[RMDB]
RNA sequence: GGGAACGACUCGAGUAGAGUCGAAAAAAAGGGGAAGAGAUGGACUUGCAUUGCUAUGAGGAAUGCUUGCCCCCGAGCGAUGAUGAGUACGAGCAGGCGAUCCAGAACGCAGCGAGCCAGGGAGUGCUAUUUCUGAUACAUUCGUGUAUCAGAAAUAAAAAGAAACAACAACAACAAC
Reactivity to 2A3 in 0.01 (KOAc 150mM, MgCl2 10mM, bicine 150mM(pH8.5), 24C), signal-to-noise 5, nucleotides 027 to 126: a000a000a010g090g020g010g010a070a060g050a010g020a070u070g000g040a120c010u030u020g000c020a140u000u150g010c020u070a070u250g060a090g060g040a050a030u080g010c000u000u030g010c020c010c000c010c010g010a030g020c020g060a110u220g040a070u110g030a050g040u110a050c020g000a010g000c010a010g010g010c010g040a040u010c020c010a010g020a080a010c040g000c010a010g020c030g020a000g010c000c010a000g010g000g020a100g020u080g020c020
Reactivity to DMS in 0.01 (KOAc 150mM, MgCl2 10mM, bicine 150mM(pH8.5), 24C), signal-to-noise 9, nucleotides 027 to 126: a030a060a060g010g000g000g010a080a050g000a070g010a120u000g010g010a100c030u000u000g010c020a090u010u000g010c020u000a120u010g020a160g010g010a040a070u000g010c040u000u000g010c040c010c030c050c030g000a260g010c050g000a080u010g010a100u010g010a140g010u010a080c140g000a090g010c040a030g000g010c030g010a060u000c030c030a070g000a080a110c180g010c030a050g010c040g010a050g010c030c030a080g000g000g000a080g010u000g010c130